[RMDB]
RNA sequence: GGGAACGACUCGAGUAGAGUCGAAAACGCAGAGUUUCGGUAAACUCUCUUUCGGCAACAGUCGUAACUCCUGGGUGGAGUCGACCAGUGCCAGGGUCGGGUAUUUGGCAAUAUCAAAACUCAUCAGCGUGCUAACCAGUUUCGACUGGUUAGCACGAAAAGAAACAACAACAACAAC
Reactivity to 2A3 in 0.01 (KOAc 150mM, MgCl2 10mM, bicine 150mM(pH8.5), 24C), signal-to-noise 1, nucleotides 027 to 126: c020g040c090a010g000a000g060u030u060u080c090g150g010u130a090a080a070c020u020c000u000c020u000u080u100c080g010g050c000a010a000c000a060g000u010c000g050u110a080a110c000u000c000c010u100g150g300g170u290g030g020a010g000u110c000g000a020c010c000a090g010u010g070c000c000a000g090g020g020u120c110g020g040g020u050a120u130u120u100g150g000c060a020a080u040a000u150c000a030a010a050a030c040u040c010a100u070c050a090g080
Reactivity to DMS in 0.01 (KOAc 150mM, MgCl2 10mM, bicine 150mM(pH8.5), 24C), signal-to-noise 1, nucleotides 027 to 126: c140g020c140a060g000a030g000u000u000u000c140g010g020u010a040a110a060c050u000c020u020c030u000u000u000c190g050g010c000a050a040c080a120g000u000c000g010u000a160a110c000u000c000c000u000g030g020g010u010g040g000a040g010u000c000g010a010c010c040a090g000u000g000c040c000a070g000g000g000u010c130g000g000g000u010a040u010u000u020g000g050c130a100a100u010a000u020c040a020a000a070a010c030u000c030a120u020c120a060g000